[RMDB]
RNA sequence: GGGAACGACUCGAGUAGAGUCGAAAAGAUAUGGAUUCACUGAGUGGAGUCCCGUUCGGAAACGAACGUGGACGUUGAAACUUUGAAUCCUAAGUCAAAGACAUGUCACCUUCGGGUGACAUGUCAACCCUUUAGGAACCUUCGGGUUCCUAAAGGGAAAAGAAACAACAACAACAAC
Reactivity to DMS in 0.01 (KOAc 150mM, MgCl2 10mM, bicine 150mM(pH8.5), 24C), signal-to-noise 1, nucleotides 027 to 126: g010a000u000a050u000g010g000a000u000u000c020a030c300u000g000a140g000u000g010g010a170g030u000c000c000c000g000u000u000c000g020g000a000a000a020c000g000a020a000c000g030u040g030g010a000c000g010u000u000g020a110a220a050c000u020u010u000g000a020a000u000c000c000u000a010a050g000u000c010a100a140a200g000a030c000a010u000g000u010c000a020c000c010u000u020c270g080g040g000u000g010a000c000a000u000g000u010c000a050a080
Reactivity to 2A3 in 0.01 (KOAc 150mM, MgCl2 10mM, bicine 150mM(pH8.5), 24C), signal-to-noise 1, nucleotides 027 to 126: g020a000u030a020u060g010g000a000u000u020c010a030c070u140g080a020g210u150g040g250a040g020u000c050c000c000g010u010u020c020g030g000a020a030a030c020g040a020a000c050g070u250g000g000a010c000g070u200u130g020a010a000a020c000u130u030u050g000a000a000u070c000c010u000a030a010g010u020c010a000a080a230g000a020c000a000u020g010u030c000a000c010c020u030u190c300g120g000g000u000g010a000c000a000u010g000u010c000a000a000
Overview: An RNA of 177 nucleotides, treated with DMS and 2A3 and read out base by base. For DMS the reverse transcriptase was MarathonRT. Source: RMDB library TTRDES, as collected in RNAgym. For DMS, 1,179 sequencing reads were counted. For 2A3 the reverse transcriptase was SuperScript II with manganese.